[RMDB]
RNA sequence: GGGAACGACUCGAGUAGAGUCGAAAAGAUAUGGAAUCUCACUAGGGAGCUGAACAGUCGGAAACGACUGAGCAGCGAAGAACUAGUGAGGAUUCCUAAGUCAAAGUCCGUACUUCGGUACGGACAAGAGUGACACGAAGUUCGCUUCGUGUCACUCAAAAGAAACAACAACAACAAC
Reactivity to DMS in 0.01 (KOAc 150mM, MgCl2 10mM, bicine 150mM(pH8.5), 24C), signal-to-noise 1, nucleotides 027 to 126: g000a050u000a300u000g040g020a000a020u010c000u000c000a030c000u000a020g020g030g020a110g090c000u000g000a010a070c000a000g000u000c000g030g000a050a050a220c000g030a010c000u020g010a040g010c000a010g000c000g010a080a160g000a130a250c010u020a020g000u010g010a030g000g000a070u000u000c000c000u010a030a100g050u000c010a090a090a140g030u000c000c010g000u000a020c000u000u000c170g040g000u000a000c000g030g000a000c010a030a050